[RMDB]
RNA sequence: GGGAACGACUCGAGUAGAGUCGAAAAUGAGUGACAAAAUGCUACAGGACAUAGAAAAUCACUCCAUGGCUCUAUCAGAAGAUGCAUUGAAAGAGCUUACUGCCACCUUAGAGGGUAGAUUUGAAGCAUCAUACAAGAUACGCUCUGCAAGGUGUAAAUGCUGACGAAAAUUCGUUUUCGUCAGCAUAAAAGAAACAACAACAACAAC
Reactivity to 2A3 in 0.01 (KOAc 150mM, MgCl2 10mM, bicine 150mM(pH8.5), 24C), signal-to-noise 4, nucleotides 027 to 156: u140g000a000g010u000g020a020c050a010a200a010a040u070g020c030u120a130c100a180g070g120a060c020a080u070a050g130a060a120a010a000u040c000a000c010u000c030c020a080u070g030g000c010u020c000u040a080u070c020a020g090a200a020g040a070u090g070c050a070u080u080g050a090a080a020g000a010g000c000u010u070a070c060u080g070c040c000a050c000c010u020u030a030g020a030g070g030g010u050a050g040a170u050u020u130g060a080a010g070c020a020u040c020a020u100a200c040a020a010g020a030u020a020c040g050c100u010c000u060g080c070a040a010g000g010u010g000u030a070a080
Reactivity to DMS in 0.01 (KOAc 150mM, MgCl2 10mM, bicine 150mM(pH8.5), 24C), signal-to-noise 2, nucleotides 027 to 156: u000g010a040g050u020g010a100c040a110a080a050a080u000g010c000u010a180c070a080g030g040a130c140a090u000a030g020a100a080a180a100u000c030a030c000u000c010c050a160u000g000g000c020u000c010u000a090u000c010a140g010a080a120g020a100u010g000c060a250u010u010g010a050a160a140g000a070g030c030u030u010a090c130u010g020c080c020a040c000c010u000u020a070g000a070g000g030g070u000a000g000a160u000u000u000g010a140a130g090c050a030u000c020a160u000a120c090a020a070g010a140u000a030c050g010c030u000c020u000g010c070a030a060g000g000u000g010u000a030a130